Structure probing data (2A3 and DMS) for a 207-nucleotide construct. It was measured as part of the RMDB library OK3TST. For 2A3 the reverse transcriptase was SuperScript II with manganese. The RNA was probed in 150 mM KOAc, 10 mM MgCl2 and 150 mM bicine (pH 8.5) at 24 C.
RNA sequence: GGGAACGACUCGAGUAGAGUCGAAAAUUGAGAAAUAUGUAUACAUGAUAUUAUCAUGAAUUAGAUAUACAGAAUUUGUAACACUCUCGAAAUCACACGAUGUGUCGGCAUUAAGAUCUAAUAUAUCGCUCGAUAACACAUUUUCAUCUAGAUACACAUCAUAAAAUUCAUUCGUGAAUUUUAUGAUAAAAGAAACAACAACAACAAC
Reactivity to 2A3 in 0.01 (KOAc 150mM, MgCl2 10mM, bicine 150mM(pH8.5), 24C), signal-to-noise 4, nucleotides 027 to 156: u040u060g030a010g060a030a100a020u120a040u060g010u040a040u020a040c000a000u000g040a010u090a170u300u200a100u100c010a010u020g040a040a040u100u110a090g030a030u010a000u010a050c040a030g120a160a130u100u130u110g040u070a070a010c040a010c050u050c000u000c020g030a060a080a050u150c040a060c020a010c110g040a040u020g010u000g000u020c010g020g000c010a010u070u100a060a040g020a060u010c040u100a140a040u090a030u020a010u120c060g020c040u060c060g020a040u120a190a000c030a010c000a040u030u060u110u090c090a100u010c020u040a010g020a040u100a070c080a020c020
Reactivity to DMS in 0.01 (KOAc 150mM, MgCl2 10mM, bicine 150mM(pH8.5), 24C), signal-to-noise 3, nucleotides 027 to 156: u010u000g000a090g020a100a110a090u000a040u010g020u000a100u030a110c010a040u000g000a240u000a180u000u000a110u000c000a020u000g000a190a140u010u010a110g020a230u020a070u010a300c070a070g000a140a150u000u000u000g050u000a140a080c050a050c050u000c010u010c040g020a070a100a180u010c070a100c140a070c120g010a020u000g020u000g010u020c010g020g040c050a060u000u010a060a110g000a090u000c040u000a080a030u000a050u000a040u030c010g020c050u000c030g010a080u010a040a080c090a030c050a050u000u010u000u010c060a040u000c020u010a140g000a230u000a100c080a070c130